An RNA of 207 nucleotides, treated with DMS and read out base by base. The DMS profile rests on 2,393 reads. Source: RMDB library M2RFPK, as collected in RNAgym. Conditions: 150 mM KOAc, 10 mM MgCl2 and 150 mM bicine (pH 8.5), 24 C.
[RMDB]
RNA sequence: GGGAACGACUCGAGUAGAGUCGAAAAACGUCCUCGUCGUACAGAACGGUAACAUGUUUUCCGAACAUCCGCGCUUGGGUAUACCAGUAUACACCUUACCCAACCCUCGCCAACGGGGAGGAUGGAAUUAAGGAGAGGGCCUUCGGGCCCUCUCCAACAUUAAGGUUAACUUCGGUUAACCUUAAUGAAAAGAAACAACAACAACAAC
Reactivity to DMS in 0.01 (KOAc 150mM, MgCl2 10mM, bicine 150mM(pH8.5), 24C), signal-to-noise 2, nucleotides 027 to 156: a040c030g020u010c000c000u010c010g000u000c070g030u000a150c100a090g020a040a250c050g000g010u070a090a090c070a130u000g000u010u010u010u010c040c040g000a070a070c040a070u000c060c030g020c070g000c130u010u000g000g020g040u000a040u010a060c060c030a160g010u000a150u000a050c070a120c030c010u000u000a060c040c000c010a050a070c020c010c030u000c070g020c060c040a150a120c050g040g020g030g040a030g020g000a020u000g010g000a060a100u000u040a150a170g030g000a000g000a010g110g100g040c000c020u060u000c180g010g030g000c000c000c000u000c000u000c000c000a000a050